[RMDB]
This 170-nucleotide RNA was probed chemically with 2A3 and DMS. The reactions ran in a buffer of 150 mM KOAc, 10 mM MgCl2 and 150 mM bicine (pH 8.5), at 24 C. It was measured as part of the RMDB library 15KLIB. 2A3 adducts were read by reverse transcription with SuperScript II with manganese. The 2A3 profile rests on 83,652 reads.
RNA sequence: GGGAACGACUCGAGUAGAGUCGAAAACUGCGGGUCCGUCGUUCCAUCCUUUUCUUACCUUGUGGCCGGCAUGGCCCCAGCCUCCUCGCUGGCGCCGGCUGGGCAACGAUCCGAGGGGACUGUCCCUAUAGUAAUAGGUUCGCCUAUUACAAAAGAAACAACAACAACAAC
Reactivity to 2A3 in 0.01 (KOAc 150mM, MgCl2 10mM, bicine 150mM(pH8.5), 24C), signal-to-noise 9, nucleotides 027 to 129: c040u050g030c030g020g000g010u030c040c020g010u010c020g110u040u020c020c010a090u120c040c010u050u100u110u050c050u100u110a150c040c020u060u110g060u100g110g030c000c000g020g000c060a200u170g050g000c000c050c000c000a000g000c000c020u120c020c020u070c070g000c010u010g010g000c020g000c010c000g030g010c000u040g000g020g000c020a070a030c050g040a040u020c020c020g020a020g000g020g010g020a040c040u060g050u070c010c000c000u090a130u070a090
Reactivity to DMS in 0.01 (KOAc 150mM, MgCl2 10mM, bicine 150mM(pH8.5), 24C), signal-to-noise 9, nucleotides 027 to 129: c060u040g000c020g010g010g010u000c030c070g000u000c040g000u000u010c020c030a040u060c040c040u030u040u040u040c060u030u050a160c070c080u030u010g020u010g040g020c030c020g050g000c040a050u060g040g000c030c020c010c010a000g020c010c060u000c110c080u040c180g000c000u000g020g030c280g030c030c030g000g030c000u040g020g030g020c010a070a070c070g010a100u040c060c020g030a050g000g020g020g000a050c050u060g020u000c010c000c010u050a070u050a120